[RMDB]
RNA sequence: GGGAACGACUCGAGUAGAGUCGAAAAGCUCGGAGACGAGCAAGGCUGACAAAACAAUGUCCCAACCUCCACGUGGUGUCGGCUGGAUAAUGCUGCAUUAUGUUGCAUUUAUCAACUGGGAACCAAAGCAGCCUACGCUGUUCGCAGCGUAGGCUGCAAAAGAAACAACAACAACAAC
Reactivity to 2A3 in 0.01 (KOAc 150mM, MgCl2 10mM, bicine 150mM(pH8.5), 24C), signal-to-noise 1, nucleotides 027 to 126: g000c000u000c000g000g010a000g010a100c000g000a000g000c000a000a100g110g000c000u030g000a000c000a000a120a000a000c000a040a090u130g070u040c000c000c000a000a000c040c010u000c000c060a130c130g140u210g000g000u000g000u040c010g000g000c000u040g000g000a000u000a010a000u020g020c010u030g010c000a000u190u210a150u300g000u000u000g000c070a010u080u180u020a050u160c020a000a080c040u000g000g000g020a000a030c030c020a060a000a040